The record gives the reactivity of an RNA of 177 nucleotides to DMS and 2A3. For 2A3 the reverse transcriptase was SuperScript II with manganese. The reactions ran in a buffer of 150 mM KOAc, 10 mM MgCl2 and 150 mM bicine (pH 8.5), at 24 C. The data come from the RNA Mapping Database (RMDB), library VIROID. For DMS the reverse transcriptase was MarathonRT.
[RMDB]
RNA sequence: GGGAACGACUCGAGUAGAGUCGAAAAAACCCGCUUUAUUCACUGGGGUCGACAACUCUGAGGAGAAAAGGGAGGAUCGGCUGGGAAGAGUAUAUCCUAUGGGAAUCCCUGGUUUCCCCUUAUGUCCGUACAUAUAUAUCUUCGGAUAUAUAUGUACAAAAGAAACAACAACAACAAC
Reactivity to DMS in 0.01 (KOAc 150mM, MgCl2 10mM, bicine 150mM(pH8.5), 24C), signal-to-noise 5, nucleotides 027 to 126: a080a070c010c000c010g020c170u000u000u010a070u010u010c130a060c170u000g010g000g010g010u010c040g000a070c080a080a110c050u000c020u020g010a050g010g000a110g010a060a040a080a060g010g010g000a040g000g000a180u020c040g000g010c120u010g000g010g000a040a090g010a180g010u010a100u010a050u000c010c010u000a080u010g010g000g010a300a100u000c010c010c010u000g010g010u000u000u000c000c010c010c140u000u000a050u000g000u020c130c220
Reactivity to 2A3 in 0.01 (KOAc 150mM, MgCl2 10mM, bicine 150mM(pH8.5), 24C), signal-to-noise 3, nucleotides 027 to 126: a020a000c110c010c000g020c070u280u300u110a290u230u210c090a040c160u100g010g040g010g000u050c020g010a030c010a080a020c020u010c070u140g040a040g030g040a040g050a020a090a020a000g030g010g000a030g010g020a040u040c010g070g000c160u080g030g010g010a080a030g110a040g230u060a050u020a020u180c010c000u020a070u130g040g000g010a010a040u000c000c000c000u010g040g000u000u020u010c000c010c010c000u090u200a140u220g100u030c090c070